[RMDB]
The record gives the reactivity of an RNA of 177 nucleotides to 2A3 and DMS. The DMS profile rests on 2,105 reads. It was measured as part of the RMDB library M2PK50. Conditions: 150 mM KOAc, 10 mM MgCl2 and 150 mM bicine (pH 8.5), 24 C. The 2A3 profile rests on 3,540 reads.
RNA sequence: GGGAACGACUCGAGUAGAGUCGAAAAGCAUCUUGCUUCGGCAAGAUGCAAAUAACGGUGAGUGCUUGCAGCUAGUCGUAAAUGCUAACUGGCCUUACGCUAAAACGAAUGCGUUCGCGCAUUCGAAGUUCUUAGGAGGGUUCGCCCUCCUAAGAACAAAAGAAACAACAACAACAAC
Reactivity to 2A3 in 0.01 (KOAc 150mM, MgCl2 10mM, bicine 150mM(pH8.5), 24C), signal-to-noise 3, nucleotides 027 to 126: g000c000a000u010c000u010u000g010c000u010u030c170g060g000c010a000a000g020a000u010g000c010a000a000a000u070a030a020c040g040g000u030g020a020g000u250g040c020u090u170g050c010a030g000c010u050a020g090u150c050g110u100a090a050a080u220g010c010u010a050a130c030u020g010g000c010c000u020u050a020c030g060c190u100a080a020a020a030c020g010a030a000u000g010c000g030u000u060c270g000c000g000c100a000u010u000c000g000a040a000
Reactivity to DMS in 0.01 (KOAc 150mM, MgCl2 10mM, bicine 150mM(pH8.5), 24C), signal-to-noise 2, nucleotides 027 to 126: g000c000a010u000c010u030u000g020c010u000u020c230g000g010c010a010a010g010a000u000g000c000a020a040a070u010a060a090c140g010g010u000g000a020g000u000g010c040u000u020g040c090a020g030c050u000a010g010u000c110g020u020a110a090a100u010g000c000u000a030a050c040u010g000g000c010c020u030u010a030c010g030c110u000a060a100a110a140c020g000a020a000u010g000c010g030u000u010c230g000c010g020c000a010u000u000c000g000a050a080